[RMDB]
RNA sequence: GGGAACGACUCGAGUAGAGUCGAAAAGCGCUGCGGCUGCGCGCGUUCGGCACGGUGCCGCGUGCGGCGGGCCGGCACUGGCUGGAGUUUCCGGCGAACGAUUGCUGGGCGUUCGCGAAGGCGGGCAGUGCUAGCAGUGAUUCGUCACUGCUAGCACAAAAGAAACAACAACAACAAC
Reactivity to 2A3 in 0.01 (KOAc 150mM, MgCl2 10mM, bicine 150mM(pH8.5), 24C), signal-to-noise 1, nucleotides 027 to 126: g040c070g010c120u300g200c050g120g000c050u070g000c040g000c000g000c010g020u030u040c010g000g030c010a020c110g020g030u080g050c050c040g020c070g020u140g030c010g010g040c020g020g030g000c050c000g000g020c010a000c020u020g060g000c010u020g000g020a100g100u120u200u030c020c030g020g000c010g020a130a060c060g080a150u020u130g000c000u000g000g000g030c020g010u030u100c020g000c030g020a050a060g100g040c010g000g040g000c000a030
Reactivity to DMS in 0.01 (KOAc 150mM, MgCl2 10mM, bicine 150mM(pH8.5), 24C), signal-to-noise 2, nucleotides 027 to 126: g020c040g010c020u010g010c040g010g020c040u010g010c040g010c030g000c030g000u000u010c030g010g020c010a100c070g000g010u000g000c020c020g000c110g040u010g010c040g030g010c050g010g000g020c060c020g000g010c060a020c000u000g020g020c010u010g010g010a140g010u000u000u000c000c010g000g000c000g010a080a070c160g000a180u010u010g010c020u000g010g000g010c030g010u000u000c010g020c000g020a100a140g000g000c030g000g020g020c050a040